[RMDB]
Structure probing data (2A3 and DMS) for a 177-nucleotide construct. It was measured as part of the RMDB library M2PK50. For DMS the reverse transcriptase was MarathonRT. The DMS profile rests on 8,644 reads. The reactions ran in a buffer of 150 mM KOAc, 10 mM MgCl2 and 150 mM bicine (pH 8.5), at 24 C.
RNA sequence: GGGAACGACUCGAGUAGAGUCGAAAAGCAAGAUGCUUCGGCAUCUUGCAGUCGUAGCGCGAUCGACAGAAUUACAGCUAUGUCGAACGACGAAGAGCGCGCACAUCAUCCCUUUCGAGGGAUGAAAACGACCAUAGUUAUUCGUAACUAUGGUCGUAAAAGAAACAACAACAACAAC
Reactivity to 2A3 in 0.01 (KOAc 150mM, MgCl2 10mM, bicine 150mM(pH8.5), 24C), signal-to-noise 6, nucleotides 027 to 126: g010c000a010a000g000a000u010g010c020u060u160c280g110g000c000a000u000c000u000u010g000c010a000g000u010c020g020u040a040g000c000g000c010g010a040u020c010g020a010c000a020g100a080a030u260u170a180c070a070g060c080u100a030u120g010u010c000g010a040a020c020g040a030c040g040a080a030g040a020g090c010g000c000g010c010a030c010a080u020c000a000u010c000c000c000u020u020u030c210g100a020g000g000g000a000u000g000a000a000a000
Reactivity to DMS in 0.01 (KOAc 150mM, MgCl2 10mM, bicine 150mM(pH8.5), 24C), signal-to-noise 7, nucleotides 027 to 126: g010c010a000a000g000a000u000g010c010u000u010c200g030g000c000a000u000c000u000u010g000c010a050g010u000c020g020u000a100g010c000g010c010g010a280u000c000g000a020c010a010g010a120a140u000u010a090c300a140g010c110u010a130u000g000u000c010g000a060a190c040g000a050c050g000a090a080g000a100g000c010g020c000g020c010a150c230a130u000c010a010u000c000c010c000u000u000u010c160g010a020g010g000g000a000u000g000a010a020a100